RNA sequence: GGGAACGACUCGAGUAGAGUCGAAAAAAAAGAUAUGGAACCUGACCCUCGUAUUUAAUCCGUUGAAAUAACUUCGGAAACGAAGUUAUGGAGGAUUAACUUUUCGAGCAGGUUCCUAAGUCAAAAAGUUUAACUAACGGUUCGCCGUUAGUUAAACAAAAGAAACAACAACAACAAC
Reactivity to DMS in 0.01 (KOAc 150mM, MgCl2 10mM, bicine 150mM(pH8.5), 24C), signal-to-noise 1, nucleotides 027 to 126: a040a100a090a060g000a020u000a110u000g010g010a000a020c010c000u010g000a300c300c300c040u000c020g020u030a010u020u000u000a010a010u010c000c000g020u000u000g000a160a100a000u000a000a000c000u000u000c000g010g000a010a010a030c000g000a000a000g020u000u000a000u020g000g000a040g030g000a000u000u000a000a030c300u000u000u020u010c000g010a000g070c000a000g000g000u000u000c020c010u000a010a050g020u030c000a040a060a030a100a160